RNA sequence: GGGAACGACUCGAGUAGAGUCGAAAAGAUAUGGACCUCUGUUUAUAAUGAUCCUGGUGGAGCGUGAUCAUCGGAAACGAUGAUACGCGUUGAAACCAGGGAUCAUUAUAAACAGAGGUCCUAAGUCCUAGAUACUUAGCUUCGGCUAAGUAUCUAGAAAAGAAACAACAACAACAAC
Reactivity to DMS in 0.01 (KOAc 150mM, MgCl2 10mM, bicine 150mM(pH8.5), 24C), signal-to-noise 1, nucleotides 027 to 126: g010a150u020a300u020g010g000a010c000c000u000c000u000g000u010u000u000a000u000a020a000u000g000a020u000c000c020u010g000g000u000g030g000a100g020c000g040u000g010a030u000c000a010u000c020g020g000a180a130a240c010g030a000u010g030a010u000a010c010g030c010g000u000u000g000a180a210a060c010c010a000g020g010g000a010u000c000a000u000u000a000u000a000a000a020c010a010g010a000g000g010u000c010c000u000a010a070g000u000c030